[RMDB]
RNA sequence: GGGAACGACUCGAGUAGAGUCGAAAACGGCGUAUCGCUAUCGCUAUGCGCGCAUAGCGUAUAUACGCGCGUAUUAUCGCGCGAUAAUAGCGAUAGCGCGCGCGGCGUAUGCGAUAGCGCGCUAUCGCCGCUUUCCCGUAUUCGUACGGGAAAGCGGAAAAGAAACAACAACAACAAC
Reactivity to DMS in 0.01 (KOAc 150mM, MgCl2 10mM, bicine 150mM(pH8.5), 24C), signal-to-noise 3, nucleotides 027 to 126: c080g000g000c040g000u000a060u010c030g000c000u000a060u000c010g000c010u010a060u000g010c080g020c030g000c190a050u000a060g010c040g010u000a040u010a050u000a100c060g020c000g000c000g020u010a150u010u010a040u000c030g000c020g000c030g010a050u020a050a080u000a050g000c000g020a040u000a000g000c030g020c120g010c010g020c080g010g020c040g000u000a080u010g010c020g010a060u010a090g030c030g010c050g000c000u000a030u000c040g020
Reactivity to 2A3 in 0.01 (KOAc 150mM, MgCl2 10mM, bicine 150mM(pH8.5), 24C), signal-to-noise 4, nucleotides 027 to 126: c030g090g020c020g040u030a040u170c030g000c010u020a010u070c000g000c020u020a040u140g050c060g010c020g000c070a070u100a040g000c020g060u010a030u010a010u030a110c030g000c010g000c000g010u050a270u140u190a120u210c040g000c000g010c000g040a080u090a180a080u050a090g000c010g000a000u010a020g010c000g000c000g000c010g000c000g020g030c000g040u140a080u230g030c040g040a050u030a020g060c030g000c020g000c040u070a040u120c040g020

Overview
The data come from the RNA Mapping Database (RMDB), library OK2TRN. The record gives the reactivity of an RNA of 177 nucleotides to DMS and 2A3. High DMS reactivity at an A or C suggests that its Watson-Crick edge is free. DMS adducts were read by reverse transcription with MarathonRT. The 2A3 profile rests on 5,157 reads. For 2A3 the reverse transcriptase was SuperScript II with manganese.